Source: RMDB libraries RFM100 and RFMREP, as collected in RNAgym. An RNA of 177 nucleotides, treated with 2A3 and DMS and read out base by base. Reactivities are given for positions 27 through 126. Conditions: 150 mM KOAc, 10 mM MgCl2 and 150 mM bicine (pH 8.5), 24 C. Values are in units of 0.01, from 0 to 300, in steps of 10. For DMS the reverse transcriptase was MarathonRT.

[RMDB]
RNA sequence: GGGAACGACUCGAGUAGAGUCGAAAAGUGCAACAGCAGAACAAUUUGCUGAGGGCUAUUGAGGCGCAACAGCAUCUGUUGCAACUCACAGUCUGGGGCAUCAAGCAGCUCCAGGCAAGAGUCCUGGUGAGUGUAGUUUGUUCGCAAACUACACUCAAAAAGAAACAACAACAACAAC
Reactivity to 2A3 in 0.01 (KOAc 150mM, MgCl2 10mM, bicine 150mM(pH8.5), 24C), signal-to-noise 7, nucleotides 027 to 126: g120u090g040c020a050a020c010a020g030c030a010g090a120a100c120a210a240u080u100u110g000c000u020g010a050g030g050g000c010u010a070u090u280g070a090g010g030c070g000c030a040a080c010a020g020c030a100u050c060u030g000u000u000g000c000a010a050c000u000c000a030c030a030g000u000c000u010g000g010g010g020c020a010u140c050a110a110g110c070a010g000c000u000c000c000a000g010g000c000a020a030g060a010g050u020c000c010u070g030g050
Reactivity to DMS in 0.01 (KOAc 150mM, MgCl2 10mM, bicine 150mM(pH8.5), 24C), signal-to-noise 6, nucleotides 027 to 126: g000u010g010c040a140a170c020a020g010c130a070g010a070a100c220a120a100u010u010u010g000c010u000g010a130g000g000g020c000u000a120u000u000g010a030g000g000c300g010c020a010a050c010a010g000c220a080u020c050u000g020u000u020g000c000a030a170c000u000c010a070c250a170g010u000c000u000g000g000g000g010c000a120u020c160a080a070g010c300a110g010c010u000c000c000a000g010g000c000a090a100g000a040g000u000c000c010u010g010g000